[RMDB]
RNA sequence: GGGAACGACUCGAGUAGAGUCGAAAAAAUAGCGGGUCAAGGUACAACGCAGAGAGUUAGGCUCAUCCCAAGUUCUCUUCGGAGUACCAAGACUUCGGUACAGAAGAGAUACCGACUCUUCAUAGAACGAUCUUAAUGGUUUCGACCAUUAAGAUCGAAAAGAAACAACAACAACAAC
Reactivity to DMS in 0.01 (KOAc 150mM, MgCl2 10mM, bicine 150mM(pH8.5), 24C), signal-to-noise 3, nucleotides 027 to 126: a100a090u000a020g010c010g010g000g000u000c000a020a300g000g010u000a010c040a020a210c030g050c080a050g000a010g010a040g030u000u010a170g030g000c060u000c300a080u010c270c000c000a060a140g020u020u000c010u000c000u000u000c000g000g010a300g010u000a000c000c000a020a280g010a010c040u010u020c020g000g000u000a060c150a140g000a000a000g020a010g000a070u010a140c040c010g000a160c010u000c000u000u010c000a110u010a060g010a050a130
Reactivity to 2A3 in 0.01 (KOAc 150mM, MgCl2 10mM, bicine 150mM(pH8.5), 24C), signal-to-noise 2, nucleotides 027 to 126: a000a000u190a060g080c040g000g010g010u010c020a050a010g000g000u000a010c000a030a000c000g000c030a000g000a000g000a000g020u030u040a050g020g000c030u030c060a110u120c060c000c000a000a020g010u020u000c000u000c000u010u000c010g000g000a010g000u000a010c000c000a000a000g000a000c000u030u010c020g000g000u100a060c020a080g010a020a020g000a010g020a020u110a150c000c030g050a060c010u010c000u000u020c010a010u060a040g130a120a030